[RMDB]
RNA sequence: GGGAACGACUCGAGUAGAGUCGAAAAGAUAUGGAUCUCUUUAAGACAUGUUCCACGGUCGGAAACGACCGUAGAACAACAGCUUAUGGAGAUCCUAAGUCAAAAGAACGAUGUUCGCAUCGUUCAAGAAACUUAGCUACUUCGGUAGCUAAGUUUCAAAAGAAACAACAACAACAAC
Reactivity to 2A3 in 0.01 (KOAc 150mM, MgCl2 10mM, bicine 150mM(pH8.5), 24C), signal-to-noise 1, nucleotides 027 to 126: g020a000u020a000u080g000g010a020u000c000u020c000u000u010u050a010a010g010a060c120a300u300g010u010u000c030c030a010c020g020g000u020c010g000g000a000a040a020c010g000a000c020c000g010u010a010g000a000a000c050a050a050c060a110g130c000u000u020a000u020g020g020a000g010a000u000c000c000u010a000a000g000u000c010a040a040a030a200g010a000a000c000g000a000u020g030u140u190c300g010c160a010u000c000g000u010u000c000a000a000
Reactivity to DMS in 0.01 (KOAc 150mM, MgCl2 10mM, bicine 150mM(pH8.5), 24C), signal-to-noise 2, nucleotides 027 to 126: g000a040u000a230u010g000g000a010u000c000u000c000u000u000u000a000a000g000a090c120a220u010g000u000u010c000c020a010c010g000g010u000c000g030g000a040a040a090c010g020a000c000c000g040u000a000g010a010a010c000a070a070c200a130g000c000u000u000a020u000g000g030a020g020a000u000c000c020u000a000a080g000u020c010a100a110a200a200g000a020a020c020g020a020u000g010u010u010c200g020c000a020u000c000g020u010u000c000a140a100